Overview
An RNA of 177 nucleotides, treated with DMS and 2A3 and read out base by base. For 2A3 the reverse transcriptase was SuperScript II with manganese. DMS adducts were read by reverse transcription with MarathonRT.

RNA sequence: GGGAACGACUCGAGUAGAGUCGAAAAAUAAAUAAAGUGUACCAAAUGGUAGGUACACACCAAGUGUGCGUUGGUCGCACACAACCAGCAGUGAAUAGAGACUGCAAAACCAAACCAAAGAAAAAAACACAUAGAUAUACUUCGGUAUAUCUAUGUGAAAAGAAACAACAACAACAAC
Reactivity to DMS in 0.01 (KOAc 150mM, MgCl2 10mM, bicine 150mM(pH8.5), 24C), signal-to-noise 2, nucleotides 027 to 126: a100u020a030a070a090u010a070a110a090g000u000g000u000a000c020c000a060a060a060u000g000g000u020a120g010g010u000a020c020a020c000a040c100c110a050a110g030u010g020u000g000c000g040u030u010g030g000u010c000g000c000a000c000a000c000a090a080c120c160a080g020c040a010g010u000g030a090a130u000a130g000a130g000a030c010u000g000c000a040a040a140a060c050c080a020a040a070c070c060a040a120a180g040a020a000a070a060a090a090a230
Reactivity to 2A3 in 0.01 (KOAc 150mM, MgCl2 10mM, bicine 150mM(pH8.5), 24C), signal-to-noise 4, nucleotides 027 to 126: a000u040a020a030a010u160a060a100a030g000u000g000u010a010c000c000a040a100a180u160g070g010u070a050g000g010u000a000c000a000c000a010c010c010a170a130g010u000g010u000g030c040g030u080u200g300g070u170c000g000c000a000c000a000c000a000a040c030c030a020g000c000a010g000u020g070a110a020u120a240g150a020g040a030c000u000g000c000a030a020a020a020c060c020a100a010a030c020c030a080a090a080g110a070a130a040a020a010a000a000
For 2A3, 4,644 sequencing reads were counted.